[RMDB]
RNA sequence: GGGAACGACUCGAGUAGAGUCGAAAAUUACUCUUGUUAGGUGAAAGUUGAUGGUCGCCGAGCCAGUCCGUACAUCCAAAAAGGACUCUAUGUAGUUGGAAGUCGAGAGCCUAUGAGAGUUAGAGUCAUGCCUAUUUUGUGUUCGCACAAAAUAGAAGUUAGUAGUUACGUUCGCGUAACUACUAACAAAAGAAACAACAACAACAAC
Reactivity to DMS in 0.01 (KOAc 150mM, MgCl2 10mM, bicine 150mM(pH8.5), 24C), signal-to-noise 3, nucleotides 027 to 156: u000u000a060c020u010c000u010u000g030u000u000a070g010g030u000g000a070a070a140g020u000u000g010a100u020g020g010u000c030g040c040c040g000a160g010c000c020a090g000u040c010c040g010u000a040c060a070u010c090c110a020a120a110a120a130g020g020a030c020u000c020u000a070u000g010u000a090g030u000u000g030g020a080a080g000u000c060g030a120g020a300g010c000c010u000a080u000g010a050g000a070g010u000u000a090g010a090g000u000c040a090u020g010c080c000u000a010u000u010u000u000g030u000g010u000u000c300g050c010a010c010a000a010a010a010u000a020g010a060a110
Reactivity to 2A3 in 0.01 (KOAc 150mM, MgCl2 10mM, bicine 150mM(pH8.5), 24C), signal-to-noise 4, nucleotides 027 to 156: u090u040a020c000u000c000u030u050g120u120u070a030g020g000u030g050a140a090a110g080u150u130g040a070u040g010g040u040c060g030c250c050g030a030g010c020c020a030g050u000c010c000g010u040a030c030a070u060c030c030a030a080a060a020a050g120g010a010c000u000c010u060a090u110g100u050a040g070u050u030g010g030a070a020g010u030c020g010a020g010a000g240c000c010u020a030u050g020a010g000a000g000u020u030a020g010a010g040u040c040a050u100g040c010c000u000a000u000u000u000u000g010u010g020u010u050c120g040c050a000c000a000a010a000a000u010a010g020a040a010
Chemical mapping of a 207-nucleotide RNA with DMS and 2A3. DMS adducts were read by reverse transcription with MarathonRT. Reactivities are given for positions 27 through 156. As a SHAPE reagent, 2A3 marks flexible, mostly unpaired nucleotides at the ribose 2'-OH. It was measured as part of the RMDB library M2RFPK.